[RMDB]
RNA sequence: GGGAACGACUCGAGUAGAGUCGAAAAGAUAUGGAUAAGACAGACGCUAUCAGCCAUUUCGGAAACGAAAUGGCAAUGAUAGACCCGUCAAUGACGUCCUAAGUCGACACACGGAUUCGUCCGUGAACAUACCAUGCCGUUUCGACGGCAUGGUAUGAAAAGAAACAACAACAACAAC
Reactivity to 2A3 in 0.01 (KOAc 150mM, MgCl2 10mM, bicine 150mM(pH8.5), 24C), signal-to-noise 3, nucleotides 027 to 126: g020a010u070a040u160g020g000a030u050a130a090g040a060c070a050g020a050c060g000c070u000a000u000c010a030g300c020c000a000u020u010u000c010g030g060a020a070a090c020g010a000a000a000u010g010g000c010a000a010u010g000a000u000a000g000a000c070c000c010g010u000c030a080a300u180g060a040c090g010u000c000c000u040a140a060g080u030c030g030a010c010a010c000a000c110g000g030a010u070u120c280g090u000c100c000g000u010g020a010a010
Reactivity to DMS in 0.01 (KOAc 150mM, MgCl2 10mM, bicine 150mM(pH8.5), 24C), signal-to-noise 3, nucleotides 027 to 126: g030a030u010a300u000g000g010a040u000a100a170g010a100c070a040g010a020c070g000c000u000a020u000c000a030g010c010c000a010u000u000u030c010g000g000a090a040a170c000g000a010a010a000u010g000g000c020a010a010u000g000a000u000a000g000a150c160c110c090g020u000c000a150a100u010g010a160c280g000u000c010c020u010a060a170g000u000c010g000a140c220a180c010a010c000g030g000a020u000u010c160g030u010c000c000g010u000g000a040a120
Structure probing data (2A3 and DMS) for a 177-nucleotide construct. Conditions: 150 mM KOAc, 10 mM MgCl2 and 150 mM bicine (pH 8.5), 24 C. Values cover nucleotides 27 to 126. For 2A3, 4,456 sequencing reads were counted.